[RMDB]
RNA sequence: GGGAACGACUCGAGUAGAGUCGAAAACUCAGGAGGUAAAAACAGUAGCCUCCCUACAUAUUUUUGGACAUUACUAAUUUGUUUUCUUUCCAUAAGUAGCAAAGUAAUAAACUUAUACCUAGCCCUUCUCUGAAUUAAAUAUUAAGUAAUGGUGGUCGUCACUAUACCGAUUCGUCGGUAUAGUGACAAAAGAAACAACAACAACAAC
Reactivity to 2A3 in 0.01 (KOAc 150mM, MgCl2 10mM, bicine 150mM(pH8.5), 24C), signal-to-noise 2, nucleotides 027 to 156: c020u060c040a020g000g020a000g000g060u110a100a220a090a160a100c090a150g130u080a090g010c000c000u090c030c000c010u090a050c060a120u150a260u210u250u120u240u140g050g030a000c010a000u070u010a030c000u080a070a160u110u040u030g040u010u120u030u040c050u000u060u050c010c020a110u060a190a020g000u030a000g000c010a050a010a050g030u090a110a110u100a160a080a000c000u120u080a020u040a110c000c010u000a020g020c000c000c000u040u000c080u050c050u080g010a010a010u080u100a170a030a020u260a040u160u150a060a000g010u000a000a090u060g030g010u020g000g110u060c040